[RMDB]
RNA sequence: GGGAACGACUCGAGUAGAGUCGAAAAUGAUGUGGAUUAAUAGAAACAGUUGUGGGUAUUCAUAUUUCAUAGUGAGAGGUAAAAUUCUUGGAUCUAUGGAAGAUGAACUACUGCGAAAGCAUUUACCACGCAUAAUAUUCUUCGGAAUAUUAUGCGUAAAAGAAACAACAACAACAAC
Reactivity to DMS in 0.01 (KOAc 150mM, MgCl2 10mM, bicine 150mM(pH8.5), 24C), signal-to-noise 6, nucleotides 027 to 126: u010g000a070u000g020u010g010g010a200u020u030a080a090u030a090g010a150a100a070c100a090g010u010u010g020u000g000g000g010u000a050u010u010c000a000u000a020u000u000u000c000a020u000a000g010u000g000a300g000a020g000g000u020a070a080a060a130u030u020c010u010u000g000g000a140u000c000u000a000u000g000g000a010a010g000a020u000g000a010a020c150u010a010c040u000g000c030g000a080a100a100g010c010a050u000u010u000a120c050c050
Reactivity to 2A3 in 0.01 (KOAc 150mM, MgCl2 10mM, bicine 150mM(pH8.5), 24C), signal-to-noise 5, nucleotides 027 to 126: u130g030a030u030g020u040g030g040a060u080u170a130a130u200a200g130a080a100a020c050a050g010u050u040g010u110g050g020g010u030a060u010u020c000a000u000a040u020u000u000c000a000u000a000g010u030g020a040g000a010g040g050u130a070a090a120a190u140u060c010u000u020g070g040a030u000c010u000a000u010g010g000a010a000g000a000u000g000a010a020c050u050a010c010u020g010c020g030a030a010a010g010c010a000u020u040u080a060c030c010
Chemical mapping of a 177-nucleotide RNA with DMS and 2A3.
For DMS the reverse transcriptase was MarathonRT.
Values cover nucleotides 27 to 126.